About this RNA: This 207-nucleotide RNA was probed chemically with 2A3. The RNA was probed in 150 mM KOAc, 10 mM MgCl2 and 150 mM bicine (pH 8.5) at 24 C. For 2A3 the reverse transcriptase was SuperScript II with manganese.
RNA sequence: GGGAACGACUCGAGUAGAGUCGAAAAAAGCUUCAACGCCUUUUUUUCCAAUCUUCUUUAGCACCGGGCUAGGGAGUAAGCCCGUGGAACCUUAGUUUUGUUCCCUCGGGACUUACUUGUGGUUCCUGUGGUGCACUCCUGACCCUGCUGCUUUGAACUAUAACAUUAACUUCGGUUAAUGUUAUAGAAAAGAAACAACAACAACAAC
Reactivity to 2A3 in 0.01 (KOAc 150mM, MgCl2 10mM, bicine 150mM(pH8.5), 24C), signal-to-noise 5, nucleotides 027 to 156: a000a000g090c120u290u180c150a190a080c140g030c030c050u050u050u030u020u020u040u100c040c030a100a170u060c080u140u010c020u050u170u060a000g000c000a010c030c020g000g020g010c030u060a060g050g040g000a000g010u060a080a010g000c000c010c000g040u030g000g010a000a000c000c000u030u030a020g020u070u120u110u200g080u140u050c000c010c030u120c140g050g000g020a030c000u010u020a000c010u030u040g110u110g090g020u010u010c010c000u040g150u230g020g030u090g000c050a010c000u000c000c000u040g050a100c000c000c020u020g030c070u000g000c000u050u030u090g030a030a030